[RMDB]
RNA sequence: GGGAACGACUCGAGUAGAGUCGAAAAGGAAAUGGACAACCACAAUAUGCAUAAAUCUAACUCCUACCAUCAGCGACACACUGCUUGACACAUAUUGCGAGAAGCACCUCGCAUUUGCGGGUUCUCUAAAAUCCUUACGUUUCGACGUAAGGAUUUUAAAAGAAACAACAACAACAAC
Reactivity to DMS in 0.01 (KOAc 150mM, MgCl2 10mM, bicine 150mM(pH8.5), 24C), signal-to-noise 4, nucleotides 027 to 126: g000g020a050a050a110u020g000g010a040c030a060a090c120c020a050c110a060a100u010a060u020g000c090a020u010a040a070a070u020c070u000a080a100c090u000c010c020u010a080c050c050a100u020c040a070g000c080g020a090c070a070c080a080c000u000g000c030u020u000g010a090c070a060c070a030u020a040u010u000g010c000g010a030g030a120a120g010c170a080c140c020u010c020g020c020a060u000u000u010g020c080g020g000g000u000u000c010u000c030u000
Reactivity to 2A3 in 0.01 (KOAc 150mM, MgCl2 10mM, bicine 150mM(pH8.5), 24C), signal-to-noise 4, nucleotides 027 to 126: g100g010a030a060a070u100g040g030a020c010a060a030c040c040a040c040a080a080u150a060u170g080c070a050u070a120a100a050u070c060u050a030a080c030u010c010c020u020a030c000c010a060u100c040a030g050c010g070a020c000a000c000a000c060u020g010c000u020u060g020a010c000a000c010a100u080a060u160u100g000c010g000a020g010a070a030g060c020a050c000c010u000c010g000c000a000u030u000u070g000c000g030g080g000u020u020c010u000c000u010
Chemical mapping of a 177-nucleotide RNA with DMS and 2A3. Source: RMDB libraries RFM100 and RFMREP, as collected in RNAgym.